[RMDB]
Annotation
An RNA of 177 nucleotides, treated with DMS and 2A3 and read out base by base. High 2A3 reactivity points to a flexible backbone, as in loops and unpaired stretches. Reactivities are rounded to 0.1 and cut off at 0 and 3.
RNA sequence: GGGAACGACUCGAGUAGAGUCGAAAACACUAUUGAUCUAAGCAAAUGUACAAAAGCAUUCGCCACUAAUUGCGUCACCACAGGAGUUACGAUGCCCCUUCUGACAGAAUUGAUUGAUAGUGGCAAGCUUUCGACUAUUGUUCGCAAUAGUCGAAAGAAAAGAAACAACAACAACAAC
Reactivity to DMS in 0.01 (KOAc 150mM, MgCl2 10mM, bicine 150mM(pH8.5), 24C), signal-to-noise 3, nucleotides 027 to 126: c040a050c010u000a040u000u000g010a020u000c030u010a160a120g000c030a030a040a020u000g010u000a070c090a090a070a130a150g000c000a010u000u010c080g010c000c040a120c140u000a060a070u000u010g020c120g000u010c020a030c090c130a070c250a040g010g010a050g010u000u000a120c170g010a150u000g010c010c020c040c020u020u010c060u010g020a030c080a060g000a040a060u000u000g020a050u000u000g030a050u000a010g020u000g000g020c110a060a070g000
Reactivity to 2A3 in 0.01 (KOAc 150mM, MgCl2 10mM, bicine 150mM(pH8.5), 24C), signal-to-noise 3, nucleotides 027 to 126: c030a010c010u040a020u040u020g030a020u040c030u100a050a040g020c000a030a010a060u090g030u110a120c070a100a170a060a010g000c010a040u030u070c050g020c010c030a080c050u080a110a100u110u160g090c030g040u030c020a010c070c000a060c040a060g060g000a040g050u050u060a070c080g030a090u180g010c000c000c000c000u030u070c030u040g010a020c010a040g130a120a090u120u080g010a020u050u030g020a010u020a020g000u000g000g030c000a010a010g020